[RMDB]
RNA sequence: GGGAACGACUCGAGUAGAGUCGAAAAUAGGUAGUUGCGCCCGGCGGCACCACACGAUUCGGCUUGGCCUGCUAUCGUCCCAUGCUUAUGCCUGAGAUGGAUCGUCGCCGAAUGAUGAUGAUGGCGGAACGUAAUCCACUUUCGAGUGGAUUACGUUAAAAGAAACAACAACAACAAC
Reactivity to DMS in 0.01 (KOAc 150mM, MgCl2 10mM, bicine 150mM(pH8.5), 24C), signal-to-noise 5, nucleotides 027 to 126: u070a120g000g010u000a040g010u010u000g010c110g020c000c000c070g000g010c000g000g020c060a080c070c070a100c160a100c140g000a100u020u020c030g010g000c030u010u000g010g010c020c020u020g010c020u000a030u010c040g010u000c000c010c000a100u040g010c070u000u020a050u030g000c010c030u000g000a080g020a100u010g000g000a060u010c030g020u000c030g020c020c040g000a110a080u030g020a130u000g010a090u000g010a120u000g000g010c010g010g000
Reactivity to 2A3 in 0.01 (KOAc 150mM, MgCl2 10mM, bicine 150mM(pH8.5), 24C), signal-to-noise 6, nucleotides 027 to 126: u170a030g010g050u010a010g010u040u040g050c060g020c110c000c000g000g010c010g020g030c050a050c060c000a070c010a010c070g140a130u150u160c050g060g000c050u020u050g010g000c000c010u010g000c010u000a020u090c010g040u020c010c000c000a020u060g000c010u160u150a090u140g020c000c030u070g030a100g020a100u100g040g030a060u040c030g030u010c000g040c030c020g060a090a090u140g080a070u060g020a030u060g020a040u110g030g020c000g020g030
Structure probing data (DMS and 2A3) for a 177-nucleotide construct. For 2A3, 5,260 sequencing reads were counted. The RNA was probed in 150 mM KOAc, 10 mM MgCl2 and 150 mM bicine (pH 8.5) at 24 C.